Conditions: 150 mM KOAc, 10 mM MgCl2 and 150 mM bicine (pH 8.5), 24 C. The record gives the reactivity of an RNA of 177 nucleotides to 2A3 and DMS. It was measured as part of the RMDB library TTRDEL. For 2A3, 1,493 sequencing reads were counted.
[RMDB]
RNA sequence: GGGAACGACUCGAGUAGAGUCGAAAAGAUAUGGACUCGCAACAGCCGUAAAGAGUGGAUCGGAAACGAUCCACGGACAUGCGACGUCCUAAGUCAAAACUGUGAGAUAGUUCGCUAUCUCACAGAACAUCGAAGCGAUCUUCGGAUCGCUUCGAUGAAAAGAAACAACAACAACAAC
Reactivity to 2A3 in 0.01 (KOAc 150mM, MgCl2 10mM, bicine 150mM(pH8.5), 24C), signal-to-noise 1, nucleotides 027 to 126: g010a000u040a040u080g000g000a000c000u030c000g010c010a050a070c040a180g190c090c060g210u300a180a150a060g300a040g050u090g000g000a020u000c000g000g020a000a030a030c000g000a000u000c040c000a010c030g010g010a030c030a030u020g030c020g040a050c180g020u000c020c040u000a090a020g000u010c030a020a020a140a240c000u010g000u000g010a000g000a000u000a000g010u150u100c300g000c220u000a000u000c000u040c020a000c000a010g010a000a000
Reactivity to DMS in 0.01 (KOAc 150mM, MgCl2 10mM, bicine 150mM(pH8.5), 24C), signal-to-noise 1, nucleotides 027 to 126: g010a050u000a280u000g000g000a020c010u010c000g030c000a020a070c140a070g000c050c090g010u000a030a050a180g100a240g050u000g000g010a000u020c000g000g000a060a100a150c000g000a010u020c010c000a040c020g000g010a040c100a130u000g000c000g000a040c240g000u000c000c000u000a020a060g030u000c010a050a070a040a120c000u000g000u000g010a040g000a000u000a010g000u000u010c150g030c000u000a000u000c000u000c000a010c000a000g000a080a120